[RMDB]
RNA sequence: GGGAACGACUCGAGUAGAGUCGAAAAUGAGCAGCAGUGCUGGAGAGGCGAUGGGGGUUUUUGUUGCAGGACACCUGCAUGUGUACCUGUCGAAGGAGUCUGACAUUCUUCUUACAGAAGUUGAAGGCCACUUAUACGAAUUCGUUCGUAUAAGUGGAAAAGAAACAACAACAACAAC
Reactivity to 2A3 in 0.01 (KOAc 150mM, MgCl2 10mM, bicine 150mM(pH8.5), 24C), signal-to-noise 4, nucleotides 027 to 126: u120g010a020g000c030a000g000c020a010g060u040g070c030u040g030g020a110g020a040g060g000c070g050a060u090g030g000g020g000g010u010u020u000u110u090g110u050u100g000c000a000g000g010a010c010a020c030c040u130g060c070a090u110g020u000g000u050a260c010c010u010g030u030c020g010a020a000g030g010a020g000u000c050u080g010a000c010a010u030u020c000u010u000c000u020u080a060c040a060g050a100a020g060u070u050g030a070a020g060g000
Reactivity to DMS in 0.01 (KOAc 150mM, MgCl2 10mM, bicine 150mM(pH8.5), 24C), signal-to-noise 8, nucleotides 027 to 126: u000g010a090g010c030a060g010c090a080g010u000g020c030u000g010g010a090g010a100g010g020c080g010a070u010g000g010g010g010g010u000u000u000u000u000g000u000u010g000c020a020g000g000a100c050a040c030c130u010g010c170a040u010g020u000g010u000a090c020c010u000g010u000c160g010a070a070g000g000a060g000u000c050u000g010a100c100a100u000u000c010u000u000c020u000u010a120c160a090g010a040a060g000u000u000g010a140a120g000g000

An RNA of 177 nucleotides, treated with 2A3 and DMS and read out base by base. It was measured as part of the RMDB library OK2TST. For 2A3 the reverse transcriptase was SuperScript II with manganese. For DMS, 13,302 sequencing reads were counted. The reactions ran in a buffer of 150 mM KOAc, 10 mM MgCl2 and 150 mM bicine (pH 8.5), at 24 C. The 2A3 profile rests on 5,189 reads. Values cover nucleotides 27 to 126.